[RMDB]
RNA sequence: GGGAACGACUCGAGUAGAGUCGAAAAAAUGUUUUAAUCCUGUAUGGGAAAGGGAUAAAAAUGUUUACUCCUUUUACUCCUUUAUAAAGGUAUGGGAAAGGGAUAAAAUGUUUUAAUCCUGUAUGGGAAAGGGAUAAAAUGUUUUAAUCCUGUAUGGACUUGAGAUCAGGUUCGCCUGAUCUCAAGUAAAAGAAACAACAACAACAAC
Reactivity to 2A3 in 0.01 (KOAc 150mM, MgCl2 10mM, bicine 150mM(pH8.5), 24C), signal-to-noise 1, nucleotides 027 to 156: a000a000u100g000u010u040u010u030a030a040u000c010c000u020g050u090a130u180g030g020g020a080a020a020g040g000g030a000u090a070a070a000a020a000u030g030u010u120u020a010c030u030c000c000u000u060u020u020a070c020u080c000c010u020u030u030a210u230a290a130a030g010g040u070a100u180g030g060g000a000a000a130g040g000g000a030u000a020a050a000a000u040g020u040u020u000u020a020a040u030c000c010u030g100u050a130u030g030g000g000a100a010a080g020g000g010a020u030a020a010a010a000u010g040u000u020u020u030a060a090u020c000c000u050g080u120a190u070g060g010

Description: The record gives the reactivity of an RNA of 207 nucleotides to 2A3. 2A3 adducts were read by reverse transcription with SuperScript II with manganese. The RNA was probed in 150 mM KOAc, 10 mM MgCl2 and 150 mM bicine (pH 8.5) at 24 C.